[RMDB]
RNA sequence: GGGAACGACUCGAGUAGAGUCGAAAAGAUAUGGAAGAUCAUGACAUGCUGACUCGGAAACGAGAUUCAGCAACAGCAUGUCUUCCUAAGUCAAAGUUUCUACGAAGGUUCGCCUUCGUAGAAACAACAAUGCGAGUAAGUUCGCUUACUCGCAUUGAAAAGAAACAACAACAACAAC
Reactivity to 2A3 in 0.01 (KOAc 150mM, MgCl2 10mM, bicine 150mM(pH8.5), 24C), signal-to-noise 2, nucleotides 027 to 126: g000a010u050a020u070g010g010a000a010g010a030u300c030a010u060g140a270c050a130u090g010c000u010g000a010c000u000c010g000g030a040a020a030c000g000a010g020a060u150u070c010a000g000c010a010a020c000a000g020c000a010u000g000u000c000u010u010c000c000u010a060a010g010u000c020a130a110a040g010u000u000u000c000u000a000c000g010a000a000g040g010u060u170c180g120c030c000u000u020c000g010u010a010g000a000a000a000c000a010a000
Reactivity to DMS in 0.01 (KOAc 150mM, MgCl2 10mM, bicine 150mM(pH8.5), 24C), signal-to-noise 6, nucleotides 027 to 126: g010a030u000a300u010g000g010a010a010g000a030u020c020a010u000g000a060c090a220u000g000c010u000g000a020c000u000c000g010g000a060a060a140c010g000a010g000a160u000u000c000a000g000c000a020a050c300a150g000c010a000u000g010u000c000u000u000c000c000u000a030a100g010u000c020a100a120a140g010u000u000u000c000u000a010c010g000a010a000g000g010u000u010c240g020c010c000u000u000c000g010u000a000g000a000a000a000c010a110a130